The record gives the reactivity of an RNA of 177 nucleotides to DMS and 2A3. DMS adducts were read by reverse transcription with MarathonRT. The reactions ran in a buffer of 150 mM KOAc, 10 mM MgCl2 and 150 mM bicine (pH 8.5), at 24 C. It was measured as part of the RMDB library OK2TRN.
RNA sequence: GGGAACGACUCGAGUAGAGUCGAAAAACACUGACGAAUUCUGCUACACCACAGCAUGGUUCGACGAUCAGCAAUUGCUCGGUGUGAUGGACGGCAGCUCCUGUCUCCCCGAAGGCGUUCCGUCGAAUACAGCCCUCUAAUUCGUUAGAGGGCUGUAAAAAGAAACAACAACAACAAC
Reactivity to DMS in 0.01 (KOAc 150mM, MgCl2 10mM, bicine 150mM(pH8.5), 24C), signal-to-noise 3, nucleotides 027 to 126: a020c080a110c080u000g010a060c070g000a080a060u000u010c080u000g010c030u000a080c060a080c110c160a140c180a030g010c020a110u000g000g010u010u000c020g030a190c090g000a090u000c080a050g010c130a180a080u010u000g000c040u000c060g010g020u000g010u020g010a080u000g010g000a100c060g000g000c070a070g020c040u010c020c000u000g000u000c040u000c020c010c010c060g020a080a040g020g010c030g000u000u000c000c000g000u010c090g000a140a100
Reactivity to 2A3 in 0.01 (KOAc 150mM, MgCl2 10mM, bicine 150mM(pH8.5), 24C), signal-to-noise 2, nucleotides 027 to 126: a000c040a000c050u070g050a020c030g030a040a050u180u000c020u010g000c000u020a000c030a070c110c040a040c070a050g000c010a040u100g090g000u060u050c020g070a050c050g080a100u190c030a010g050c050a080a300u220u170g000c030u020c020g020g000u040g050u080g030a120u110g010g020a000c000g020g060c060a050g010c040u050c010c000u020g030u000c020u000c010c000c000c010g020a030a050g030g020c010g020u020u000c000c070g040u080c000g060a030a000